[RMDB]
This 177-nucleotide RNA was probed chemically with 2A3. Source: RMDB library OK1LIB, as collected in RNAgym. Values are in units of 0.01, from 0 to 300, in steps of 10. The reactions ran in a buffer of 150 mM KOAc, 10 mM MgCl2 and 150 mM bicine (pH 8.5), at 24 C.

RNA sequence: GGGAACGACUCGAGUAGAGUCGAAAACUCAUGAGGUGGCAGACCGAAUCCUAAGAAAGUGAUUGCUGCCUCGUGCAUGAUUGCAUGAGGGAACAUUAGGAUUACUCCUACAAUUAUUUGAGAGAUAGGAUCCUCCCUAGUUCGCUAGGGAGGAUCCAAAAGAAACAACAACAACAAC
Reactivity to 2A3 in 0.01 (KOAc 150mM, MgCl2 10mM, bicine 150mM(pH8.5), 24C), signal-to-noise 3, nucleotides 027 to 126: c000u000c030a060u090g010a050g080g030u010g020g020c010a040g000a160c050c030g050a020a020u000c000c000u000a000a130g010a220a020a000g220u050g080a270u100u300g040c020u150g010c000c030u010c000g000u000g000c000a030u190g010a260u300u180g000c000a010u020g030a000g090g040g010a050a000c060a120u000u030a010g000g000a000u000u060a050c010u000c000c020u060a030c080a040a080u140u240a120u150u290u080g010a040g000a000g020a020u150a100